[RMDB]
The record gives the reactivity of an RNA of 177 nucleotides to 2A3 and DMS.

RNA sequence: GGGAACGACUCGAGUAGAGUCGAAAAUCGACAUAAGCGUGCUCGUCGUAGGAGCGGACCCACUUGUCGGCCUGAUUCGUCAAGAUGUAGGCGCGCGAAUCGGAGUCCGGCCUUCUAUCGUUGGCCGCCGAAUAACGGACUUCGGUCCGUUAUUCGGAAAAGAAACAACAACAACAAC
Reactivity to 2A3 in 0.01 (KOAc 150mM, MgCl2 10mM, bicine 150mM(pH8.5), 24C), signal-to-noise 2, nucleotides 027 to 126: u050c010g010a010c040a040u190a090a020g060c050g090u110g040c110u030c060g000u030c040g010u030a050g040g030a040g060c000g030g000a020c000c000c000a040c070u040u100g140u170c000g010g050c010c010u060g030a060u060u000c050g070u120c120a100a060g000a080u070g130u130a030g130g000c100g050c050g000c010g210a000a020u050c070g020g000a140g020u000c010c000g100g080c040c010u010u030c060u070a160u080c060g040u000u110g020g000c000c010g010
Reactivity to DMS in 0.01 (KOAc 150mM, MgCl2 10mM, bicine 150mM(pH8.5), 24C), signal-to-noise 2, nucleotides 027 to 126: u000c050g010a160c120a060u000a120a100g000c040g000u010g020c020u010c090g010u000c060g020u000a080g000g010a010g020c020g010g000a020c000c010c010a120c100u010u000g020u030c070g010g000c020c000u010g010a120u010u000c000g030u020c260a120a190g040a010u000g000u000a030g010g020c010g020c080g010c110g000a050a030u030c180g010g010a080g020u010c020c000g010g000c160c030u010u000c010u000a040u010c060g010u000u000g000g020c010c020g030
The 2A3 profile rests on 1,208 reads.